[RMDB]
RNA sequence: GGGAACGACUCGAGUAGAGUCGAAAAGUGCCUUAGACAAAGGACGCACGGGAGCCCCACCACACCUAGAGCCACGCUUUGAAGGAUCUGCCAAGCUCACUUUUAAUCAUGAGAAAGAAAUUACCCAACGUUCAGGAUUUUUCGAAAUCCUGAACGUAAAAGAAACAACAACAACAAC
Reactivity to 2A3 in 0.01 (KOAc 150mM, MgCl2 10mM, bicine 150mM(pH8.5), 24C), signal-to-noise 4, nucleotides 027 to 126: g070u080g100c020c010u050u060a100g000a130c060a040a080a000g050g000a080c010g000c050a020c040g000g000g070a030g090c000c000c000c000a000c010c000a030c000a010c000c020u040a050g010a010g050c010c010a040c040g020c040u070u030u070g050a080a020g030g010a040u020c020u080g000c010c040a050a010g000c000u010c010a030c010u050u110u080u140a070a050u040c040a060u090g080a020g090a080a090a000g110a010a060a040u070u070a120c000c010c000a020
Reactivity to DMS in 0.01 (KOAc 150mM, MgCl2 10mM, bicine 150mM(pH8.5), 24C), signal-to-noise 3, nucleotides 027 to 126: g030u010g000c080c020u000u000a170g010a200c200a060a070a090g010g000a070c040g030c090a070c080g000g020g070a080g010c040c030c030c010a120c080c070a110c040a060c070c050u010a060g030a060g000c000c020a040c110g010c040u020u010u030g060a110a060g000g060a050u040c020u020g060c010c030a080a220g050c040u000c020a070c080u000u000u020u010a030a200u010c080a070u000g000a070g010a080a090a060g020a030a040a020u060u020a040c010c000c000a120